[RMDB]
RNA sequence: GGGAACGACUCGAGUAGAGUCGAAAAGCCGAAGAGUUCGCUCUUCGGCGACGAAUUUGGCGUAGAUGAGAGUCUACAGUACUAGCCAUCCCACAUGUACAAAUAAGCAUUGCUUCGGCAAUGCUAACGUAGGUAGUAUCUUCGGAUACUACCUACGAAAAGAAACAACAACAACAAC
Reactivity to DMS in 0.01 (KOAc 150mM, MgCl2 10mM, bicine 150mM(pH8.5), 24C), signal-to-noise 4, nucleotides 027 to 126: g010c010c000g000a010a010g010a020g020u010u030c230g020c000u000c000u000u000c000g010g010c000g000a030c160g010a130a160u000u010u000g000g030c010g000u000a020g010a030u000g000a250g020a180g000u000c000u000a000c010a100g010u000a020c030u000a210g000c010c010a060u000c010c010c000a090c090a060u000g020u000a030c030a140a070a060u010a090a020g000c000a010u000u000g010c000u000u010c140g030g010c000a010a010u000g000c010u000a010a060
Reactivity to 2A3 in 0.01 (KOAc 150mM, MgCl2 10mM, bicine 150mM(pH8.5), 24C), signal-to-noise 7, nucleotides 027 to 126: g000c000c000g000a010a000g020a000g060u130u190c230g020c100u000c000u000u010c000g000g110c000g000a010c020g120a070a190u150u090u170g010g000c010g010u010a010g000a030u030g050a030g000a010g080u000c000u000a010c030a030g020u010a020c020u040a010g010c000c010a060u020c010c010c000a020c010a050u090g020u010a010c010a020a100a050u230a130a010g000c000a000u010u010g000c000u030u100c210g040g000c000a010a000u010g000c000u000a040a000
This 177-nucleotide RNA was probed chemically with DMS and 2A3. Source: RMDB library M2PK50, as collected in RNAgym. For DMS the reverse transcriptase was MarathonRT. The DMS profile rests on 4,780 reads. Conditions: 150 mM KOAc, 10 mM MgCl2 and 150 mM bicine (pH 8.5), 24 C.